[RMDB]
RNA sequence: GGGAACGACUCGAGUAGAGUCGAAAAGAUGAGAACAUACUGUUCAGUUGGGCAAUCAGGUGACACUCCAAAUCUUGCAGGAGGUCACGAGCAAGAAAAAGAGGACGGCCUGACUUAACAAAAGAAAGGGUACUAGCUAUUUCGAUAGCUAGUACCCAAAAGAAACAACAACAACAAC
Reactivity to 2A3 in 0.01 (KOAc 150mM, MgCl2 10mM, bicine 150mM(pH8.5), 24C), signal-to-noise 3, nucleotides 027 to 126: g150a060u280g060a030g040a140a020c140a050u260a080c120u020g000u000u010c000a000g000u010u030g010g000g000c020a050a040u030c020a080g010g220u000g020a000c050a180c130u000c000c000a060a070a170u100c110u090u250g050c070a040g000g010a000g050g000u020c000a000c000g000a000g020c080a090a060g120a190a090a040a010a000g240a090g030g030a040c030g050g000c000c020u000g000a000c000u000u010a000a000c000a000a040a000a000g190a110a110a040
Reactivity to DMS in 0.01 (KOAc 150mM, MgCl2 10mM, bicine 150mM(pH8.5), 24C), signal-to-noise 2, nucleotides 027 to 126: g000a070u000g000a080g000a070a030c070a160u000a210c240u000g100u000u000c000a060g010u000u000g000g000g000c110a120a100u060c040a000g000g000u000g010a040c100a080c000u030c000c000a000a160a130u010c060u060u030g030c060a210g050g000a040g050g000u030c120a040c080g000a100g000c050a030a070g000a030a000a110a170a110g010a030g000g090a170c300g020g040c000c000u000g000a020c020u000u000a060a000c050a030a050a090a090g010a060a140a120